Notes: An RNA of 177 nucleotides, treated with 2A3 and read out base by base. Conditions: 150 mM KOAc, 10 mM MgCl2 and 150 mM bicine (pH 8.5), 24 C.
RNA sequence: GGGAACGACUCGAGUAGAGUCGAAAAUCUGUGGUUGCAAGUCGAAGCCAGCUGCAGGCUAAACGACCCACGUAAGGCGGCAGUAUAGUGCCGCUGAUCAUGGUGCGGCUUAGAAGUAAGCCCGACCGUCCCGAGAGAACUUCGGUUCUCUCGGGACAAAAGAAACAACAACAACAAC
Reactivity to 2A3 in 0.01 (KOAc 150mM, MgCl2 10mM, bicine 150mM(pH8.5), 24C), signal-to-noise 1, nucleotides 027 to 126: u000c010u000g040u070g000g000u000u020g000c000a100a130g150u160c050g150a080a040g000c080c000a010g010c000u010g010c020a000g020g000c000u000a000a020a020c070g190a100c000c000c000a000c050g000u070a000a000g050g050c000g010g030c000a000g020u110a080u250a270g260u110g000c000c000g000c000u000g000a030u050c000a040u290g070g000u020g050c040g010g000c020u000u010a000g000a070a010g190u240a120a030g080c020c040c000g000a010c080c000